RNA sequence: GGGAACGACUCGAGUAGAGUCGAAAAAAGGUAACGCGCUUCAGUCCGUUCUCGGCCCAGGCAGAAGCCGGCAACGUCCUGGUGCUCCGCGCCCCAUGGAAUAACGACUGGUUCACAGCGCUCGAAGGCUUCCCCGAGGCUUCGCACGACGACGAUGGCGUAUAGCCCGAUUCGUCGGGCUAUACGCAAAAGAAACAACAACAACAAC
Reactivity to 2A3 in 0.01 (KOAc 150mM, MgCl2 10mM, bicine 150mM(pH8.5), 24C), signal-to-noise 1, nucleotides 027 to 156: a000a000g080g000u050a130a010c090g010c040g000c000u050u100c050a010g000u010c020c070g050u070u010c030u070c050g010g000c000c030c000a120g090g050c050a030g010a290a010g080c010c020g020g000c030a060a100c020g020u040c010c040u000g000g000u030g010c030u120c080c170g010c030g040c010c010c010c010a050u200g000g010a080a120u150a300a050c030g080a010c030u000g040g120u300u300c070a020c010a130g010c000g010c030u070c030g000a000a050g070g050c000u040u060c020c000c000c000g000a080g000g030c010u000u050c010g030c010a060c080g080a000c020g030a030c070g100a060u300g070
Structure probing data (2A3) for a 207-nucleotide construct.
For 2A3, 482 sequencing reads were counted.
The data come from the RNA Mapping Database (RMDB), library OK3TST.
The RNA was probed in 150 mM KOAc, 10 mM MgCl2 and 150 mM bicine (pH 8.5) at 24 C.
Values cover nucleotides 27 to 156.